[RMDB]
Source: RMDB library OK3TST, as collected in RNAgym. The record gives the reactivity of an RNA of 207 nucleotides to 2A3 and DMS. Conditions: 150 mM KOAc, 10 mM MgCl2 and 150 mM bicine (pH 8.5), 24 C. The 2A3 profile rests on 1,835 reads. Reactivities are given for positions 27 through 156.
RNA sequence: GGGAACGACUCGAGUAGAGUCGAAAACAGCAUCGGUAUUCAGCAUCUAUGUCUUUAGAUCCCUGAUGGCGUAUUAUUGACUCUUUUUUCUAGAGACCAAUUUGAGGCACACCUGUAAACGGAUAAUGGACAUGGUGAGCAACCAGCACCCCUGGUAUAAAUACGCAGUGUUCGCACUGCGUAUUUAAAAAGAAACAACAACAACAAC
Reactivity to 2A3 in 0.01 (KOAc 150mM, MgCl2 10mM, bicine 150mM(pH8.5), 24C), signal-to-noise 3, nucleotides 027 to 156: c030a020g050c030a020u080c130g050g010u110a130u060u180c080a050g030c000a050u020c030u120a040u050g030u010c010u010u090u050a080g000a100u020c010c010c000u060g060a100u080g020g060c030g020u080a050u090u050a010u050u070g020a090c010u010c020u030u080u040u020u230u120c090u100a010g020a080g040a280c070c000a030a020u040u060u080g060a070g070g000c040a010c010a020c090c040u060g060u220a050a160a070c050g000g010a020u030a110a070u130g020g010a000c020a030u040g020g000u010g030a060g020c010a010a010c020c000a000g000c020a040c000c000c000c010u020g030g000u130a070
Reactivity to DMS in 0.01 (KOAc 150mM, MgCl2 10mM, bicine 150mM(pH8.5), 24C), signal-to-noise 3, nucleotides 027 to 156: c030a140g020c040a070u000c070g030g020u000a080u000u010c050a160g050c040a050u000c030u000a080u000g010u000c040u010u010u010a090g010a130u010c030c030c010u000g020a100u000g010g060c000g000u010a090u010u010a070u000u000g000a070c040u000c010u000u010u010u010u000u000c120u040a070g000a050g000a110c070c030a040a060u000u000u010g010a110g030g020c060a130c020a050c020c010u000g010u010a080a060a090c040g000g030a110u000a050a150u000g000g020a070c020a030u000g010g000u000g010a170g030c070a050a080c020c010a070g010c040a070c020c020c030c010u000g020g000u000a120